[RMDB]
RNA sequence: GGGAACGACUCGAGUAGAGUCGAAAAGAAGGCGAAUAUCGCGAAUGGUGGCCCGACGGUUGUAUGCGCGCUGAAUAUACUUACCAUAACGGCCUCAAAGAUGGCCCAUGUGCCACAUAUCAUCGCAGCGGUUUGCCUGAAUCAAAGCGCGUAUAUAUCAAGAGCAGUUUUUCGAAACUGCUCUUGAAAAAGAAACAACAACAACAAC
Reactivity to 2A3 in 0.01 (KOAc 150mM, MgCl2 10mM, bicine 150mM(pH8.5), 24C), signal-to-noise 4, nucleotides 027 to 156: g110a010a010g010g000c010g030a040a010u120a090u160c050g010c050g030a030a080u160g060g010u040g020g020c060c060c020g030a030c060g010g020u060u030g020u080a020u010g000c010g010c000g000c010u050g040a120a000u150a000u030a100c030u120u080a070c000c010a040u040a200a030c010g010g020c020c000u030c030a120a160a000g080a120u060g000g000c050c000c030a150u160g100u210g010c010c000a000c010a020u140a040u100c100a020u080c040g010c120a050g020c000g040g020u000u000u030g000c000c000u000g030a010a040u120c060a060a070a030g000c010g000c000g010u000a000u000a000u000a000
Reactivity to DMS in 0.01 (KOAc 150mM, MgCl2 10mM, bicine 150mM(pH8.5), 24C), signal-to-noise 3, nucleotides 027 to 156: g010a210a040g010g010c010g020a050a050u000a040u000c020g010c000g000a050a060u010g010g030u000g010g000c020c020c020g020a130c110g010g000u000u010g010u000a050u000g010c000g040c040g080c020u000g020a070a120u000a120u000a080c070u000u000a090c050c020a090u000a070a200c080g000g020c020c010u000c060a060a090a180g030a120u000g020g020c000c000c070a090u000g030u000g040c040c010a030c020a080u010a100u000c070a070u000c090g000c090a210g020c030g030g020u000u010u000g030c000c020u020g000a110a100u000c080a040a090a060g010c000g020c020g030u000a030u000a050u000a190